RNA sequence: GGGAACGACUCGAGUAGAGUCGAAAAUCAGGUAGAUCCAAAAUCCGAAGAUUUUGGUUCCGCCUGCAUCGUGGUGCCCGUGUUCGUGCGCGUGGGCAGUCGCGUGCGUCAAAGUAUCAGUUGCCAAUGGGUAAUCAGGAUUCGUCCUGAUUACCCAAAAAGAAACAACAACAACAAC
Reactivity to DMS in 0.01 (KOAc 150mM, MgCl2 10mM, bicine 150mM(pH8.5), 24C), signal-to-noise 2, nucleotides 027 to 126: u010c030a030g000g030u000a040g010a020u000c000c000a010a010a020a000u000c010c280g040a120a220g030a020u000u000u010u000g000g000u010u000c000c030g000c010c000u010g010c230a050u010c050g020u010g000g000u010g000c000c010c070g040u000g020u000u010c040g070u010g010c010g020c000g010u000g010g000g000c080a050g010u000c020g010c000g000u000g020c020g010u010c050a060a140a100g010u000a070u000c070a160g010u010u000g000c000c030a100a170